[RMDB]
RNA sequence: GGGAACGACUCGAGUAGAGUCGAAAAUAUAAAUUGACCAUAAAUGAAGAUCAUAAGAAUUGUCAUCGAUGGGCUGGUAGACAUCUGACUAAUUUACAAUCUGGAUGUAAGUACAGAAAACUGAUUGGGUGAAAAGGAUGUUCGCAUCCUUUUCACCAAAAGAAACAACAACAACAAC
Reactivity to DMS in 0.01 (KOAc 150mM, MgCl2 10mM, bicine 150mM(pH8.5), 24C), signal-to-noise 1, nucleotides 027 to 126: u110a100u030a120a070a160u000u050g000a140c000c070a000u060a140a150a140u020g000a190a070g000a000u000c030a120u010a160a070g000a190a080u000u020g020u000c000a000u000c080g000a000u000g020g060g060c000u060g060g000u000a010g030a070c060a020u000c020u040g000a070c060u110a000a020u020u000u020a030c150a090a110u050c020u060g010g000a020u000g040u060a110a010g000u000a180c080a050g000a100a050a030a040c070u070g010a000u000u000g010
Reactivity to 2A3 in 0.01 (KOAc 150mM, MgCl2 10mM, bicine 150mM(pH8.5), 24C), signal-to-noise 1, nucleotides 027 to 126: u130a010u010a000a060a170u090u080g000a000c000c000a180u140a010a290a020u170g000a090a150g050a140u130c060a010u050a090a040g020a000a080u140u060g000u000c000a050u140c140g040a010u050g170g020g000c070u010g130g000u040a050g000a040c040a000u020c050u020g000a000c030u020a080a080u250u080u060a100c090a100a140u000c060u110g150g000a060u030g070u190a090a040g000u050a130c000a000g060a070a050a000a080c000u010g000a050u010u000g090